About this RNA:
Source: RMDB library TTRDES, as collected in RNAgym. Chemical mapping of a 177-nucleotide RNA with 2A3 and DMS. The 2A3 profile rests on 1,582 reads. The reactions ran in a buffer of 150 mM KOAc, 10 mM MgCl2 and 150 mM bicine (pH 8.5), at 24 C. The DMS profile rests on 745 reads. 2A3 adducts were read by reverse transcription with SuperScript II with manganese.
RNA sequence: GGGAACGACUCGAGUAGAGUCGAAAAGAUAUGGAGACACCACACUUCGAUGAAACAUCUCGGAAACGAGAUGUGGAGAAGGUGGAGUCUCCUAAGUCAAAUCUUGCUAAGUUCGCUUAGCAAGAAAGGUUGUAGAAACGUUCGCGUUUCUACAACCAAAAGAAACAACAACAACAAC
Reactivity to 2A3 in 0.01 (KOAc 150mM, MgCl2 10mM, bicine 150mM(pH8.5), 24C), signal-to-noise 1, nucleotides 027 to 126: g000a000u110a040u230g010g000a030g000a000c020a000c040c020a200c210a300c030u030u020c150g300a300u110g000a000a020a000c010a000u020c020u000c000g000g070a000a040a040c000g010a000g000a000u000g000u010g000g000a000g030a030a030g070g000u020g030g040a020g010u000c000u030c000c000u010a040a020g040u000c020a080a060a080u000c010u000u010g050c000u010a030a000g010u000u090c170g000c120u000u000a030g000c000a020a000g000a060a010a020
Reactivity to DMS in 0.01 (KOAc 150mM, MgCl2 10mM, bicine 150mM(pH8.5), 24C), signal-to-noise 1, nucleotides 027 to 126: g000a010u000a300u020g010g000a030g010a000c020a120c000c000a020c000a220c050u010u000c000g080a160u000g000a300a150a040c000a000u000c000u000c000g030g000a150a050a190c010g020a020g020a030u000g000u000g020g020a030g000a000a020g010g080u000g040g010a050g040u000c000u020c000c020u030a000a120g000u000c020a120a060a300u000c000u000u000g010c000u000a000a010g010u000u030c300g000c000u000u000a030g010c000a010a000g000a050a020a020